Structure probing data (2A3) for a 207-nucleotide construct. The RNA was probed in 150 mM KOAc, 10 mM MgCl2 and 150 mM bicine (pH 8.5) at 24 C. 2A3 adducts were read by reverse transcription with SuperScript II with manganese. It was measured as part of the RMDB library OK3TST.
[RMDB]
RNA sequence: GGGAACGACUCGAGUAGAGUCGAAAAUGGUGAAAUCAUGCAGUAAAUUCAGCAGUCUAGCUUCUGAUUUCAUGCUGUUAACCACUGAGCUCUACUGCCUAGCACCUAGCAUCUUGACACUUUCCAGGUCCACACUAACAAAAUAAAAUAAGGAAGGGCCUACCUCACAUUUCGAUGUGAGGUAGGCAAAAGAAACAACAACAACAAC
Reactivity to 2A3 in 0.01 (KOAc 150mM, MgCl2 10mM, bicine 150mM(pH8.5), 24C), signal-to-noise 2, nucleotides 027 to 156: u040g010g000u030g020a060a030a030u110c050a000u150g020c010a020g030u050a010a080a120u150u020c020a010g000c000a000g070u000c050u160a030g070c060u060u060c030u080g020a080u000u000u060c000a000u020g010c000u070g000u080u090a030a020c020c020a040c120u070g070a000g010c000u010c010u000a050c020u030g050c010c010u030a000g050c000a050c010c000u000a010g050c050a090u060c040u000u130g070a020c010a000c040u030u050u050c000c010a010g030g030u000c040c010a070c000a000c080u130a200a020c080a060a090a070a040u160a010a110a060a000u220a050a020g070g020a000a040g050g000